[RMDB]
RNA sequence: GGGAACGACUCGAGUAGAGUCGAAAAAGGCCGCCGCGCACGAACUGGCGCUCGAUCUCCGCCUCGCUCGAGUAGGUUCCCCGGGGAUCCCUCUUCGAGCCCUUGCCACGUUACAGGUAAGUCACGUAGUGUAUUCCCCAGAGGGGCACUUUUUAUGCGUUUCAUACAAGUUCGCUUGUAUGAAACGAAAAGAAACAACAACAACAAC
Reactivity to 2A3 in 0.01 (KOAc 150mM, MgCl2 10mM, bicine 150mM(pH8.5), 24C), signal-to-noise 2, nucleotides 027 to 156: a000g050g000c080c000g050c060c060g000c020g090c000a190c190g120a300a080c200u220g040g000c000g010c020u020c010g040a030u020c010u040c040c020g000c000c000u000c000g000c000u010c000g000a010g000u010a040g030g040u000u000c000c000c000c000g040g000g040g000a040u040c000c000c030u050c060u090u070c020g050a070g030c050c050c000u020u090g040c030c010a090c060g050u100u080a050c010a060g000g180u140a180a040g020u040c040a000c100g040u050a050g010u040g030u160a200u150u220c060c000c000c020a010g020a030g050g010g000g000c010a050c020u150u180u080u080u100a110u260g000
The record gives the reactivity of an RNA of 207 nucleotides to 2A3. The RNA was probed in 150 mM KOAc, 10 mM MgCl2 and 150 mM bicine (pH 8.5) at 24 C. Values cover nucleotides 27 to 156.